[RMDB]
RNA sequence: GGGAACGACUCGAGUAGAGUCGAAAAAAAGAGAGCAACGGGGCUAGCGAGUGGAUGUUCCGCCUCCCCGGGGAGCCGAGUGAGGCUUAUCCCGGAGUGCCGGGCAAGUCCCCCCAUGCCCGUUCCAUAAUCCCAAACUUCGGUUUGGGAAAAAGAAACAACAACAACAAC
Reactivity to DMS in 0.01 (KOAc 150mM, MgCl2 10mM, bicine 150mM(pH8.5), 24C), signal-to-noise 6, nucleotides 027 to 129: a040a030a030g030a130g030a050g000c020a010a020c090g000g000g000g000c080u030a090g000c070g010a080g030u010g010g000a060u040g030u040u030c080c070g030c160c020u010c020c070c000c020g000g000g000g000a040g030c040c010g040a210g050u070g020a160g030g010c000u000u000a040u030c020c000c020g030g000a080g020u000g030c240c030g000g020g030c010a000a000g040u000c000c000c000c010c000c010a110u000g000c030c020c010g010u060u010c010c010a050u040a080a200
Reactivity to 2A3 in 0.01 (KOAc 150mM, MgCl2 10mM, bicine 150mM(pH8.5), 24C), signal-to-noise 5, nucleotides 027 to 129: a000a000a000g160a000g030a000g000c010a020a050c050g020g000g040g010c010u060a050g060c050g090a040g010u100g010g030a000u020g050u210u050c020c000g030c020c010u030c020c000c010c010g010g010g000g000a010g000c010c000g060a090g140u290g110a090g000g000c020u030u010a100u130c000c000c000g000g000a010g000u020g030c010c030g010g000g000c000a040a040g090u080c020c000c000c000c000c000a000u030g020c020c000c000g000u020u010c010c000a070u100a110a130